[RMDB]
RNA sequence: GGGAACGACUCGAGUAGAGUCGAAAACGAUCUGUUCGCAGAUCGAGCUACGGAGACGUAGCAAAGUCAGCGUGGACCUGGUCGCUGACCCUACCGGAGAUGUAAGCUUAUCCACGUGUGCUAGGAUAAGCCCAGGUCCUGAGAAUCAGCACACGAAUACUCACACAUUAUUCGUAAUGUGUGAGUAAAAAGAAACAACAACAACAAC
Reactivity to 2A3 in 0.01 (KOAc 150mM, MgCl2 10mM, bicine 150mM(pH8.5), 24C), signal-to-noise 1, nucleotides 027 to 156: c010g010a000u000c000u030g020u080u080c140g010c060a000g000a000u000c000g010a020g000c010u020a010c010g020g030a060g020a040c000g010u010a000g000c010a010a050a010g000u000c000a000g000c000g020u010g000g000a020c000c020u010g020g010u060c010g000c000u000g000a000c020c000c000u040a070c030c020g100g030a110g010a000u130g130u300a160a060g000c010u010u000a000u010c000c020a120c150g030u030g020u000g000c030u070a040g000g000a010u010a010a000g000c000c000c000a000g000g000u000c000c030u000g090a160g090a100a200u180c110a050g000c000a000c000a000c000g000a090a040
This 207-nucleotide RNA was probed chemically with 2A3. The reactions ran in a buffer of 150 mM KOAc, 10 mM MgCl2 and 150 mM bicine (pH 8.5), at 24 C.